[RMDB]
RNA sequence: GGGAACGACUCGAGUAGAGUCGAAAAAUACAUACUGACACCGGUUGCUCAACAGGCUGUGUGGGACAAUAGAAUAACAAGGCUGUCAAUUUGAGCUUGACGGCUGCAAACCGAAUGGAGUGAAAACGUAACCGGACUCACUUCGGUGAGUCCGGAACAAAGUGAAGGGAUUCGUCCCUUCACUUUGAAAAGAAACAACAACAACAAC
Reactivity to DMS in 0.01 (KOAc 150mM, MgCl2 10mM, bicine 150mM(pH8.5), 24C), signal-to-noise 2, nucleotides 027 to 156: a100u000a110c030a150u020a180c060u000g000a100c010a100c020c010g050g020u000u000g020c020u000c050a070a050c060a070g010g000c010u000g020u000g020u000g000g000g000a060c070a040a110u000a120g000a070a100u010a060a100c050a100a160g000g060c020u000g020u000c010a040a050u020u000u000g010a200g000c300u000u010g000a040c010g030g000c000u030g000c080a040a090a050c040c030g000a060a140u000g010g020a150g000u000g000a040a040a060a090c110g020u000a060a150c020c000g010g000a050c000u000c010a010c000u010u000c300g070g000u020g020a050g000u000c000c000g000g000a000a060
Reactivity to 2A3 in 0.01 (KOAc 150mM, MgCl2 10mM, bicine 150mM(pH8.5), 24C), signal-to-noise 2, nucleotides 027 to 156: a000u130a010c020a000u050a040c000u060g090a000c020a030c030c020g090g010u040u080g000c020u020c030a040a060c000a130g040g000c070u040g020u040g040u100g120g020g030a010c020a050a120u060a100g070a070a030u140a140a000c030a080a000g060g000c020u000g020u020c010a010a010u040u050u140g050a040g020c010u000u010g000a000c020g020g000c000u030g040c020a060a080a080c080c070g090a050a060u080g030g010a070g020u100g010a050a060a000a000c050g040u060a010a030c000c000g000g000a000c000u000c000a000c000u000u070c120g030g000u000g000a010g000u030c010c000g010g000a000a000

This 207-nucleotide RNA was probed chemically with DMS and 2A3. Reactivities are given for positions 27 through 156. The 2A3 profile rests on 918 reads. The reactions ran in a buffer of 150 mM KOAc, 10 mM MgCl2 and 150 mM bicine (pH 8.5), at 24 C. Source: RMDB library M2RFPK, as collected in RNAgym.